[RMDB]
RNA sequence: GGGAACGACUCGAGUAGAGUCGAAAAGAUAUGGAGUACGGGAGCGCAUACUUCCCUAAGCUGGGUUAUAUCGGAAACGAUAUAACCCAGCUUAGCAGUAUGAACUACGCUUUGUACUCCUAAGUCACACUCACCAUAUGUUCGCAUAUGGUGAGUGAAAAGAAACAACAACAACAAC
Reactivity to DMS in 0.01 (KOAc 150mM, MgCl2 10mM, bicine 150mM(pH8.5), 24C), signal-to-noise 2, nucleotides 027 to 126: g040a020u010a300u020g000g030a020g030u000a000c010g030g020g020a030g010c040g040c000a030u000a010c000u000u000c230c290c010u000a000a010g000c010u000g000g010g010u010u010a000u000a000u000c010g020g020a140a160a210c000g020a010u000a000u000a010a010c010c000c000a020g010c000u000u000a000g060c110a010g000u000a000u010g000a070a070c130u000a290c040g030c030u000u000u000g010u000a000c000u000c000c000u010a020a050g020u000c040a290
Source: RMDB library TTRINS, as collected in RNAgym.
An RNA of 177 nucleotides, treated with DMS and read out base by base.
The DMS profile rests on 1,413 reads.
Conditions: 150 mM KOAc, 10 mM MgCl2 and 150 mM bicine (pH 8.5), 24 C.
Values cover nucleotides 27 to 126.